[RMDB]
RNA sequence: GGGAACGACUCGAGUAGAGUCGAAAACAACUGGAAACCUGCAUCUCCCAGGGCCAGGAGAGGAGUGGUCAGACUGGGGAGGCACUGGCUCACUGUGUGGGUCUGAGAGCAUGGACCCUGGAACCUACAGACCUGGAUUUAUAUCCUGGCUUUGCCAGCCUAUUUAAAUGUUCGCAUUUAAAUAGGCAAAAGAAACAACAACAACAAC
Reactivity to 2A3 in 0.01 (KOAc 150mM, MgCl2 10mM, bicine 150mM(pH8.5), 24C), signal-to-noise 7, nucleotides 027 to 156: c010a010a050c030u070g040g020a080a040a070c010c030u040g020c030a080u030c030u030c020c000c000a010g010g010g010c000c000a010g020g020a010g010a010g030g020a050g030u060g010g000u020c020a010g020a140c030u020g020g010g000g000a020g030g000c000a020c060u020g010g000c010u110c050a020c050u180g060u110g000u030g260g030g000u000c020u050g110a150g010a000g100c040a070u130g060g040a070c010c000c000u010g020g030a050a050c010c020u050a060c070a030g050a060c000c000u030g040g020a030u020u230u080a160u090a000u060c000c010u020g020g020c030u050u050u050g020c010c010a010
Reactivity to DMS in 0.01 (KOAc 150mM, MgCl2 10mM, bicine 150mM(pH8.5), 24C), signal-to-noise 2, nucleotides 027 to 156: c040a090a100c050u010g000g000a070a080a110c020c010u000g010c070a080u000c060u010c010c020c010a190g030g020g000c000c050a060g000g000a060g000a090g010g020a160g020u010g010g000u000c020a090g020a230c020u000g010g020g040g020a230g050g010c040a150c070u000g000g010c010u010c020a030c030u010g010u000g030u020g010g000g000u000c020u040g010a130g010a160g040c070a150u000g000g010a120c010c010c020u000g000g010a060a110c110c010u010a100c080a100g010a070c000c000u010g000g000a110u020u000u010a150u010a200u050c010c040u000g000g010c030u000u000u010g010c030c040a210